RNA sequence: GGGAACGACUCGAGUAGAGUCGAAAAGAUAUGGACGUCCAGUAGCAUCGAUCUACUGGGUCGGAAACGACCCGUAGGGAGCUACAGGACGUCCUAAGUCAAAGCCUUAUUUGUUCGCAAAUAAGGCGUGAGAACUGACGUUCGCGUCAGUUCUCACAAAAGAAACAACAACAACAAC
Reactivity to 2A3 in 0.01 (KOAc 150mM, MgCl2 10mM, bicine 150mM(pH8.5), 24C), signal-to-noise 2, nucleotides 027 to 126: g020a020u020a010u150g010g000a000c010g000u020c000c020a020g000u020a000g000c010a130u300c070g070a050u020c010u000a020c150u300g010g000g000u000c000g000g010a050a080a000c000g010a010c020c020c000g000u000a000g010g010g020a050g000c000u000a000c010a020g020g000a000c000g000u010c000c020u000a000a000g000u000c010a040a200a070g000c000c000u000u000a010u010u000u000g090u030u160c300g000c210a000a010a010u010a000a000g000g000c010
Reactivity to DMS in 0.01 (KOAc 150mM, MgCl2 10mM, bicine 150mM(pH8.5), 24C), signal-to-noise 2, nucleotides 027 to 126: g000a020u010a240u020g000g000a020c010g000u000c000c000a080g040u000a000g030c010a300u010c180g000a040u030c000u000a000c000u010g070g010g000u000c010g010g000a050a040a090c010g000a010c020c000c020g050u000a010g040g010g020a010g040c000u000a000c010a050g010g000a010c000g000u000c000c000u010a000a060g000u020c020a140a110a210g000c000c000u000u000a020u000u010u000g000u000u020c290g000c020a010a000a010u000a000a020g000g000c000
Annotation: The record gives the reactivity of an RNA of 177 nucleotides to 2A3 and DMS. For 2A3, 4,630 sequencing reads were counted. The reactions ran in a buffer of 150 mM KOAc, 10 mM MgCl2 and 150 mM bicine (pH 8.5), at 24 C. The DMS profile rests on 2,007 reads.